RNA sequence: GGGAACGACUCGAGUAGAGUCGAAAAAACUAUAACACCUUUAUUUAAGUCUGUUGUGGACCAUAGAAUAUGGUAAAUUACAACAAGCAAAAUAAAGUUAUAUAUGCUUUUAUAAAAUAACAUGCUACAUCAGAUAUAAGUUCGCUUAUAUCUGAUGAAAAGAAACAACAACAACAAC
Reactivity to 2A3 in 0.01 (KOAc 150mM, MgCl2 10mM, bicine 150mM(pH8.5), 24C), signal-to-noise 1, nucleotides 027 to 126: a000a000c020u070a010u050a110a000c000a030c030c020u000u000u010a040u020u010u000a110a030g010u050c010u000g000u010u030g010u010g030g000a010c000c000a030u020a050g300a270a060u150a000u110g050g000u070a100a260a240u120u040a000c000a000a000c000a040a070g000c000a000a180a000a000u000a010a000a000g000u030u030a050u030a010u030a040u200g000c010u140u210u000u070a300u220a250a150a000a000u090a130a000c050a080u050g000c010u070a030
Reactivity to DMS in 0.01 (KOAc 150mM, MgCl2 10mM, bicine 150mM(pH8.5), 24C), signal-to-noise 2, nucleotides 027 to 126: a010a010c030u010a060u000a030a070c090a180c210c000u000u000u010a010u010u010u010a150a170g010u010c040u000g010u000u010g000u000g000g010a030c000c000a020u000a100g000a200a130u030a020u000g000g000u000a050a020a100u000u000a010c000a000a010c010a000a060g000c000a130a010a010a000u000a010a000a020g000u020u020a090u010a010u000a000u020g010c020u000u000u010u000a180u020a110a060a130a080u000a040a070c050a050u010g010c120u020a170
This 177-nucleotide RNA was probed chemically with 2A3 and DMS. Reactivities are given for positions 27 through 126. DMS adducts were read by reverse transcription with MarathonRT. For 2A3, 792 sequencing reads were counted. It was measured as part of the RMDB library RFMREP.